Source: RMDB libraries RFM100 and RFMREP, as collected in RNAgym. Chemical mapping of a 177-nucleotide RNA with DMS and 2A3. 2A3 adducts were read by reverse transcription with SuperScript II with manganese. The RNA was probed in 150 mM KOAc, 10 mM MgCl2 and 150 mM bicine (pH 8.5) at 24 C.
[RMDB]
RNA sequence: GGGAACGACUCGAGUAGAGUCGAAAACGGACGAAUUAGCAACAAAGGGUAAGGUUUAAUCGCCGAAGUUAGAUUUCGGAUAGCUGCGGAAGUGGCGGGAUUGGUAUAGUAGAUCAGUAAUGAUCUGCGUCAUAUAAGUAUUCGUACUUAUAUGACGAAAAGAAACAACAACAACAAC
Reactivity to DMS in 0.01 (KOAc 150mM, MgCl2 10mM, bicine 150mM(pH8.5), 24C), signal-to-noise 9, nucleotides 027 to 126: c070g010g010a070c070g010a080a090u010u010a060g020c070a070a070c110a060a080a100g000g000g010u010a060a070g000g010u010u010u020a060a070u010c120g010c010c000g010a030a030g010u010u030a090g010a160u010u000u000c030g000g000a100u010a070g010c040u000g010c060g010g020a090a090g020u010g000g010c060g000g000g000a090u000u000g000g010u010a060u010a100g010u010a010g010a010u000c000a020g010u030a100a100u000g000a010u000c010u000g010
Reactivity to 2A3 in 0.01 (KOAc 150mM, MgCl2 10mM, bicine 150mM(pH8.5), 24C), signal-to-noise 9, nucleotides 027 to 126: c030g020g060a010c020g020a070a130u110u060a090g060c040a010a080c020a070a100a080g040g010g030u070a050a050g050g010u050u070u160a080a050u100c050g000c020c010g020a020a000g020u060u170a070g020a190u030u040u020c010g010g010a030u060a060g020c040u050g020c030g030g050a080a040g030u040g050g030c030g010g000g020a050u050u100g040g010u090a040u030a140g070u020a010g010a010u000c020a010g040u140a090a160u050g000a010u000c000u010g020